RNA sequence: GGGAACGACUCGAGUAGAGUCGAAAACACUGCCUCCUUUUAAAAUCAUGCUACAAGGAUGUCUUUCACUUUGAAUUCUGCGCUUACAUUGUUCAAGAGGCAUCACCAUGUUUAUAACCUCAGACGCACCUGAUAUAAUUUUCGAAUUAUAUCAGGUAAAAGAAACAACAACAACAAC
Reactivity to 2A3 in 0.01 (KOAc 150mM, MgCl2 10mM, bicine 150mM(pH8.5), 24C), signal-to-noise 7, nucleotides 027 to 126: c030a010c030u060g020c010c010u050c020c020u060u140u080u170a070a120a030a070u090c030a030u090g040c020u060a070c030a090a050g080g000a030u020g060u020c020u030u130u100c070a090c120u100u070u070g050a060a050u080u030c020u080g030c060g020c070u070u070a040c020a080u060u070g030u030u060c020a030a020g010a020g050g000c000a000u000c000a010c020c010a020u040g020u020u100u010a120u050a060a060c000c010u040c040a030g030a140c040g000c060
Reactivity to DMS in 0.01 (KOAc 150mM, MgCl2 10mM, bicine 150mM(pH8.5), 24C), signal-to-noise 9, nucleotides 027 to 126: c080a120c100u000g010c030c020u000c020c020u000u000u000u000a040a080a100a080u000c050a050u000g010c100u000a080c150a080a110g010g010a040u000g000u000c030u000u010u010c120a090c120u000u010u000g000a050a070u000u000c040u000g010c090g010c130u000u010a120c060a040u000u000g010u000u000c070a050a050g010a060g000g010c020a030u000c040a100c120c040a040u000g000u000u000u000a060u010a120a120c050c020u010c070a100g010a090c150g010c170